Chemical mapping of a 177-nucleotide RNA with DMS and 2A3.
Source: RMDB library TTRDEL, as collected in RNAgym.
For DMS, 5,105 sequencing reads were counted.

[RMDB]
RNA sequence: GGGAACGACUCGAGUAGAGUCGAAAAGAUAUGGAGGCUGCUCAAGCGAACUACAGCGUCGGAAACGACAGCUGCGCUUGUGAGGCAGCCUCCUAAGUCAAAAGAAAGGUUCUUCGGAACCUUUCAACCACGUAUUCUAGUUCGCUAGAAUACGUGGAAAAGAAACAACAACAACAAC
Reactivity to DMS in 0.01 (KOAc 150mM, MgCl2 10mM, bicine 150mM(pH8.5), 24C), signal-to-noise 4, nucleotides 027 to 126: g000a030u010a300u000g000g000a010g020g020c000u010g010c000u000c010a020a020g000c010g010a070a060c110u020a300c020a010g010c000g020u000c000g000g000a100a100a180c020g010a010c010a090g060c010u000g010c040g000c020u000u000g000u020g020a060g010g000c000a000g000c010c000u000c010c000u000a000a060g010u000c030a080a060a100a120g000a000a010a010g010g000u000u000c000u000u010c200g020g010a000a000c000c000u000u000u000c000a070a170
Reactivity to 2A3 in 0.01 (KOAc 150mM, MgCl2 10mM, bicine 150mM(pH8.5), 24C), signal-to-noise 1, nucleotides 027 to 126: g020a010u070a050u140g000g020a010g010g000c000u020g000c010u000c220a000a000g020c040g000a030a020c090u190a040c300a010g000c010g010u010c000g030g040a070a050a050c000g010a000c000a090g010c010u000g020c040g000c010u040u050g070u150g120a130g000g050c020a000g000c000c000u000c000c000u000a000a000g010u010c000a050a030a040a140g020a000a010a020g000g000u020u020c020u040u160c300g070g010a010a030c010c000u010u010u010c000a000a000